[RMDB]
RNA sequence: GGGAACGACUCGAGUAGAGUCGAAAAGCAUUUCUUGUUCGAAGUCCAAGGCGACGUAACAUAGUUUUUCCUUGAUGUCACGGACAAUUUCUCUUUCAGCAGUGGUGGAGAAAGAGUAACCACGUUCUCCAACGAGUCGUUUCGACGACUCGUUGGAAAAAGAAACAACAACAACAAC
Reactivity to DMS in 0.01 (KOAc 150mM, MgCl2 10mM, bicine 150mM(pH8.5), 24C), signal-to-noise 1, nucleotides 027 to 126: g020c120a290u000u000u010c110u010u000g010u020u000c020g070a120a100g000u020c070c000a080a040g000g100c300g040a020c080g010u000a020a050c300a140u000a150g020u000u000u000u000u010c000c050u000u040g000a090u000g000u000c050a100c030g000g000a000c010a060a060u000u000u000c020u020c040u000u000u030c020a150g070c190a070g000u000g080g000u000g000g000a050g000a010a000a040g000a080g000u000a090a100c020c080a110c090g000u000u000c110